An RNA of 177 nucleotides, treated with DMS and read out base by base.
RNA sequence: GGGAACGACUCGAGUAGAGUCGAAAAGCCAAGUGCCAAAAUGGGUUAAUAUCAAUGCCUUGGCAAACUAGCCUAUCUUGGUAACUUGAGUAGGGAUCCCCUUUCGAGCCUUUUCAGUGCCAAAUGAUGGCGUUAUCAUUUUCGAAUGAUAACGCCAAAAAGAAACAACAACAACAAC
Reactivity to DMS in 0.01 (KOAc 150mM, MgCl2 10mM, bicine 150mM(pH8.5), 24C), signal-to-noise 1, nucleotides 027 to 126: g000c020c030a020a010g000u000g000c000c000a000a000a010a000u000g010g040g010u000u000a010a090u050a130u010c200a130a190u000g000c040c060u040u020g010g020c040a000a060a130c190u000a010g000c000c000u000a020u000c030u010u000g000g000u000a040a030c010u010u000g000a090g040u000a030g000g000g000a210u000c010c020c040c070u020u000u000c060g020a160g010c030c010u000u010u000u030c210a130g000u020g000c030c030a040a070a110u010g010a170

Conditions: 150 mM KOAc, 10 mM MgCl2 and 150 mM bicine (pH 8.5), 24 C.